[RMDB]
RNA sequence: GGGAACGACUCGAGUAGAGUCGAAAAGAUGACCAGUAUUGGCCAUUUAUAGUAAACAAGAACCAAAAUUUUUUAUGCUAAAUCACUAACAUUAGUGGAGUUUUUGUUAAAGUAGUAUAAAAUGACAAUUUAUGCUAGGGUUCGCCCUAGCAUAAAUAAAAGAAACAACAACAACAAC
Reactivity to 2A3 in 0.01 (KOAc 150mM, MgCl2 10mM, bicine 150mM(pH8.5), 24C), signal-to-noise 3, nucleotides 027 to 126: g020a000u010g030a040c000c020a020g050u220a220u140u140g030g000c020c000a000u000u080u020a230u060a110g160u160a080a110a000c030a030a020g030a010a020c030c050a100a080a040a130u080u100u000u010u010u020a050u030g000c030u020a050a090a090u100c040a000c030u030a100a090c050a110u250u110a000g020u100g070g070a070g020u050u000u000u110u020g030u000u090a080a080a030g020u020a030g010u000a040u020a100a120a130a030u070g050a080c080a080
Reactivity to DMS in 0.01 (KOAc 150mM, MgCl2 10mM, bicine 150mM(pH8.5), 24C), signal-to-noise 3, nucleotides 027 to 126: g000a010u010g000a080c000c000a020g000u030a090u090u020g010g030c050c000a020u000u000u000a110u020a080g000u040a110a030a090c140a100a070g000a140a150c060c020a110a140a060a100u010u060u010u000u030u000a010u020g010c000u020a000a080a040u080c030a040c040u000a020a140c080a090u020u010a010g020u020g000g000a190g000u000u000u020u000u010g000u020u000a040a080a110g010u010a010g010u000a020u010a000a030a000a040u060g000a110c180a060

This 177-nucleotide RNA was probed chemically with 2A3 and DMS. High DMS reactivity at an A or C suggests that its Watson-Crick edge is free. For DMS the reverse transcriptase was MarathonRT.